[RMDB]
RNA sequence: GGGAACGACUCGAGUAGAGUCGAAAACACGUCGUGCAUUUUGUAUAUGAAGCCGUAUUAGUUAAACCUGGGCGCUUCUUACCAAAGUUGCGAAUUAACUUAACUAAGAUGGUUCAAUUCUCUGUGACCAUUUUACCACUUUCGAGUGGUAAAAUGGAAAAGAAACAACAACAACAAC
Reactivity to 2A3 in 0.01 (KOAc 150mM, MgCl2 10mM, bicine 150mM(pH8.5), 24C), signal-to-noise 4, nucleotides 027 to 126: c070a000c030g120u100c030g020u060g050c100a120u070u050u060u130g070u060a130u010a030u170g050a060a000g070c010c010g010u000a050u010u020a000g000u000u020a020a040a040c020c050u070g050g030g020c000g000c000u010u010c000u010u020a150c040c040a070a060a050g000u020u030g020c000g000a020a050u090u030a060a030c040u020u000a000a010c010u010a010a000g020a050u050g000g000u010u040c020a040a040u060u010c050u000c010u060g120u050g120a050
Reactivity to DMS in 0.01 (KOAc 150mM, MgCl2 10mM, bicine 150mM(pH8.5), 24C), signal-to-noise 1, nucleotides 027 to 126: c080a150c080g010u040c020g000u010g000c000a080u000u000u000u000g020u010a030u010a120u020g000a080a130g000c000c010g070u000a080u000u020a000g000u030u000a010a030a040c170c190u000g000g030g020c000g000c000u000u030c000u000u000a180c300c190a020a000a010g000u000u000g010c040g000a060a080u010u040a060a090c130u000u000a020a070c060u000a000a010g000a070u050g000g030u010u010c040a000a110u000u000c040u000c000u000g020u020g000a290
Source: RMDB library OK1LIB, as collected in RNAgym. Chemical mapping of a 177-nucleotide RNA with 2A3 and DMS. The reactions ran in a buffer of 150 mM KOAc, 10 mM MgCl2 and 150 mM bicine (pH 8.5), at 24 C. For 2A3 the reverse transcriptase was SuperScript II with manganese. For DMS, 1,602 sequencing reads were counted.